This 207-nucleotide RNA was probed chemically with 2A3 and DMS. The reactions ran in a buffer of 150 mM KOAc, 10 mM MgCl2 and 150 mM bicine (pH 8.5), at 24 C. Values cover nucleotides 27 to 156.
RNA sequence: GGGAACGACUCGAGUAGAGUCGAAAAACUAUAACGAUAUUUUCAUCCUGAUCUCUUCAUGCAGUUAUAUGUUUCCAAGAACAGAUAAACUGUGAACUUAAUACAAGUGUCUCCUUUCCUUGGAUUCUCACCAUCUGGGUGGUAAACAUGACAGAAACUAUCCUCCUCUUUUCGAAGAGGAGGAUAGAAAAGAAACAACAACAACAAC
Reactivity to 2A3 in 0.01 (KOAc 150mM, MgCl2 10mM, bicine 150mM(pH8.5), 24C), signal-to-noise 4, nucleotides 027 to 156: a000c120u130a090u100a250a050c040g050a050u020a110u100u030u100u130c050a060u060c010c020u020g060a110u040c030u010c020u110u040c020a040u130g000c030a010g030u090u020a090u020a020u200g000u000u040u000c020c010a020a030g010a060a040c030a040g040a070u080a060a130a040c020u030g030u030g070a100a030c030u070u140a080a030u120a180c060a100a050g000u010g060u050c010u040c030c060u040u090u100c020c000u000u020g000g020a020u090u030c050u010c020a020c020c000a040u080c050u140g060g000g070u030g010g050u080a020a060a060c100a020u120g120a010c080a040g230a220a020a020
Reactivity to DMS in 0.01 (KOAc 150mM, MgCl2 10mM, bicine 150mM(pH8.5), 24C), signal-to-noise 2, nucleotides 027 to 156: a120c050u020a070u000a110a160c060g020a120u010a060u010u000u020u000c050a130u030c040c050u010g010a120u020c030u000c040u000u000c020a080u000g010c010a190g000u000u020a050u000a060u000g020u010u010u000c060c140a050a110g000a070a060c060a060g010a070u020a040a100a050c040u000g040u010g020a230a060c060u000u000a080a080u000a110c100a060a090g020u010g010u000c010u010c000c010u000u000u000c050c020u000u020g030g020a140u000u010c060u020c000a050c050c030a120u000c030u000g010g010g020u040g000g000u000a070a060a030c000a010u000g000a110c060a100g000a100a070a170

It was measured as part of the RMDB library OK3TST.
Values are in units of 0.01, from 0 to 300, in steps of 10.